[RMDB]
RNA sequence: GGGAACGACUCGAGUAGAGUCGAAAAGUUGACUCAAGUUUGGUUACUUCUGUUGGUGAUUCUAGUGAAAUCGCCACUAAAAUGUUUGAUUCCUUUGUUAAUAGUUUCGUCUCGCUGUAUAAUGUCAAUAACGGUAGGUUCGCCUACCGUAAAAGAAACAACAACAACAAC
Reactivity to DMS in 0.01 (KOAc 150mM, MgCl2 10mM, bicine 150mM(pH8.5), 24C), signal-to-noise 5, nucleotides 027 to 129: g020u000u000g030a080c040u010c100a120a110g040u000u000u000g010g060u010u010a080c090u030u030c090u020g010u040u030g020g030u000g000a070u020u030c050u000a180g000u050g020a140a010a040u030c020g000c060c010a040c070u050a050a100a050a100u020g030u000u000u000g030a110u000u010c000c000u000u030u030g020u040u050a040a070u030a050g020u010u030u000c050g050u020c020u020c000g020c060u020g040u040a000u020a060a080u070g000u000c060a020a070u000a030
Reactivity to 2A3 in 0.01 (KOAc 150mM, MgCl2 10mM, bicine 150mM(pH8.5), 24C), signal-to-noise 4, nucleotides 027 to 129: g020u040u010g010a020c040u020c110a070a210g030u080u080u060g090g020u040u060a080c010u070u060c110u080g180u230u080g030g000u010g000a040u020u010c030u060a130g050u060g210a050a000a000u000c000g000c010c000a000c010u000a020a040a000a060u130g060u050u090u140g060a090u090u060c060c000u020u020u020g000u000u080a130a020u060a150g060u050u000u100c010g000u000c000u000c040g030c010u010g000u010a030u020a070a080u210g080u060c040a040a030u100a060